This 307-nucleotide RNA was probed chemically with DMS and 2A3. The RNA was probed in 150 mM KOAc, 10 mM MgCl2 and 150 mM bicine (pH 8.5) at 24 C. For DMS the reverse transcriptase was MarathonRT. It was measured as part of the RMDB library POS240.
RNA sequence: GGGAACGACUCGAGUAGAGUCGAAAAAGAGGAUGCGAUAGUACGCUAUCGCAUCCUCAAACGUAUCUCCGAGUCCCGUCACGGAUGGCGGUGAUAGGAGUAACGGCUGGUUGGCACAGCCAUCGACGUUCCUGUUUGACAAUGAAACUGGUGCGUUCGCACCUCAAGAACAGGCUACGUCGUAAACCAUAAUAUCCCAACGCGGUCGGGAAUCCUCGCCCUUCAGGGCGGGGAACGAGUAGCAGCUAUACGUAGCUGCUACUCGAAGAAGAGAAUUCGUUCUCUUCAAAAGAAACAACAACAACAAC
Reactivity to DMS in 0.01 (KOAc 150mM, MgCl2 10mM, bicine 150mM(pH8.5), 24C), signal-to-noise 4, nucleotides 027 to 266: a160g000a020g020g010a010u000g000c010g010a010u000a000g020u010a080c200g010c010u000a000u000c020g010c000a000u000c010c000u000c000a000a040a060c150g020u000a100u020c000u010c010c000g000a240g010u000c010c010c000g000u010c020a090c300g040g010a130u010g010g000c030g000g000u020g000a010u000a110g000g000a020g000u010a090a070c120g000g000c100u000g000g010u010u000g010g030c180a160c070a080g010c010c010a090u000c000g020a010c010g000u000u000c000c000u000g000u000u000u000g000a200c200a110a140u010g000a090a150a090c190u010g000g010u010g000c000g010u030u020c180g000c000a010c000c000u000c140a050a230g000a010a000c000a000g000g000c140u010a010c000g010u000c000g000u010a020a040a040c090c080a070u010a080a110u010a080u010c030c000c000a070a100c130g000c140g010g010u000c040g000g000g000a110a100u000c000c000u000c000g000c000c000c000u010u020c280a160g010g000g000c000g010g000g000g000a010a020c010g010a000g000u000a010g010c000a020g010c000u000a030u000a100c160g000u000a010g000c000u000g000c000u000a000c000u000c000g000a030a080
Reactivity to 2A3 in 0.01 (KOAc 150mM, MgCl2 10mM, bicine 150mM(pH8.5), 24C), signal-to-noise 4, nucleotides 027 to 266: a000g020a000g020g000a010u000g000c010g000a000u000a000g030u050a020c170g020c120u000a010u000c000g020c010a000u000c000c020u010c000a000a000a000c020g030u050a070u070c010u000c000c000g040a060g290u010c000c000c010g000u020c020a050c180g300g160a280u200g020g000c010g000g000u200g000a000u010a010g000g020a010g010u030a040a010c030g010g000c030u020g050g050u190u130g110g030c080a030c030a170g010c020c000a020u040c000g000a000c000g000u010u010c000c010u000g030u000u010u040g060a070c070a070a130u260g150a180a090a100c160u190g000g020u020g030c050g200u210u230c070g000c000a010c000c010u020c030a050a040g020a000a000c000a010g010g080c100u050a000c000g000u000c000g000u000a040a020a010c010c010a010u050a200a070u070a210u110c020c000c020a020a030c080g070c040g100g040u100c050g010g030g080a030a030u030c000c010u000c000g010c000c040c000u190u270c120a160g010g000g000c000g010g000g000g000a000a010c000g010a000g000u000a000g000c010a000g000c000u010a020u010a070c240g110u020a020g000c000u000g000c000u000a000c000u000c000g000a000a000